An RNA of 207 nucleotides, treated with DMS and read out base by base.
For DMS the reverse transcriptase was MarathonRT.
The reactions ran in a buffer of 150 mM KOAc, 10 mM MgCl2 and 150 mM bicine (pH 8.5), at 24 C.

RNA sequence: GGGAACGACUCGAGUAGAGUCGAAAAUUGCAUUAUUCCAUCCCAAACCUUGGUAGAGGAGAGGUUUGGUGCUACUUCCGAUUCUAAAUAAGAGUAUAUCAGAUCCACAUCAUUCUCAAUGUCGUAUAUUCUCCGAAUUAAUUCAGGAUCUGGAAUCUGAAUCCAUGCAAUUCGUUGCAUGGAUUCAAAAAGAAACAACAACAACAAC
Reactivity to DMS in 0.01 (KOAc 150mM, MgCl2 10mM, bicine 150mM(pH8.5), 24C), signal-to-noise 2, nucleotides 027 to 156: u000u000g020c020a160u000u000a080u010u020c000c000a140u000c050c020c000a050a130a050c040c080u000u000g020g040u000a130g000a150g020g010a260g020a160g040g030u010u000u000g000g040u000g000c020u000a040c060u000u000c000c010g020a040u010u000c010u000a020a070a100u000a100a140g010a070g000u000a050u010a050u000c040a090g000a050u010c060c050a100c040a040u000c020a080u000u000c060u000c040a140a060u010g010u000c100g000u000a050u000a110u000u000c030u000c100c040g050a100a090u010u000a040a090u000u000c030a060g030g000a000u000c000u000g050g020a040a090u010c050
Reactivities are given for positions 27 through 156.